[RMDB]
RNA sequence: GGGAACGACUCGAGUAGAGUCGAAAACACUCGACAGGAUUAAGCAUCGCGAAGACAUCCAUGUAGAGGCAGGCCAGACCAGCCUUGAGGAUGUUUUCAUCCAGUUCAUGGCCGGGGCGAAGGACAAGCUAAUUAGUGGGUUCGCCCACUAAUUAGCAAAAGAAACAACAACAACAAC
Reactivity to DMS in 0.01 (KOAc 150mM, MgCl2 10mM, bicine 150mM(pH8.5), 24C), signal-to-noise 3, nucleotides 027 to 126: c120a110c090u000c050g000a060c110a090g020g000a050u000u000a120a140g010c060a060u010c100g000c120g030a050a010g000a020c010a010u000c000c000a130u010g010u010a220g000a000g020g020c030a070g000g020c040c160a150g000a300c030c020a060g020c000c000u000u000g000a180g020g020a010u010g000u000u000u010u000c020a060u000c040c020a100g000u010u000c080a070u000g020g030c040c010g000g000g010g000c050g020a020a050g000g000a070c170a060a100
Reactivity to 2A3 in 0.01 (KOAc 150mM, MgCl2 10mM, bicine 150mM(pH8.5), 24C), signal-to-noise 2, nucleotides 027 to 126: c020a030c010u010c010g010a030c030a090g090g010a090u080u090a070a040g070c030a090u170c050g040c080g110a010a010g010a000c000a000u000c010c000a050u100g070u120a040g000a010g040g000c020a000g020g000c020c040a070g050a300c000c020a000g000c000c000u030u050g070a090g050g000a010u000g010u020u030u000u040c000a000u000c030c000a040g060u090u090c060a060u100g050g000c020c000g030g000g010g000c030g030a050a020g030g010a020c030a090a060